[RMDB]
RNA sequence: GGGAACGACUCGAGUAGAGUCGAAAACAACAGGGAGGUUGGUGGUGGACGAGCCACUCGCCAACCGCGUCAGGUCCGGAAGGAAGCAGCCCUAACGAGCCAGGCACGGGUCGCCGUGCCAGUACAAAGUUUAGUAUGGAUUCGUCCAUACUAAACUAAAAGAAACAACAACAACAAC
Reactivity to DMS in 0.01 (KOAc 150mM, MgCl2 10mM, bicine 150mM(pH8.5), 24C), signal-to-noise 9, nucleotides 027 to 126: c060a100a120c130a110g010g000g000a160g010g010u000u000g010g020u000g010g020u000g000g000a210c300g010a140g020c010c000a010c000u010c030g010c010c000a010a030c000c010g010c110g000u010c070a060g010g000u010c010c010g010g020a140a070g000g010a080a060g000c110a100g000c050c010c020u010a050a160c070g000a090g010c050c050a120g010g010c010a020c000g000g000g010u010c300g020c010c000g020u000g000c010c010a060g010u010a070c170a060a080
Reactivity to 2A3 in 0.01 (KOAc 150mM, MgCl2 10mM, bicine 150mM(pH8.5), 24C), signal-to-noise 6, nucleotides 027 to 126: c020a000a020c020a040g060g060g000a080g040g000u010u020g010g000u010g010g010u000g020g030a080c070g030a060g240c020c000a010c010u080c010g000c000c000a010a000c000c000g000c000g050u060c020a040g000g080u010c010c020g030g060a050a030g040g010a040a030g050c050a020g030c020c000c000u020a050a020c040g030a010g060c030c060a060g000g000c000a000c010g000g030g050u190c090g040c140c000g000u000g000c000c000a000g000u010a030c050a030a200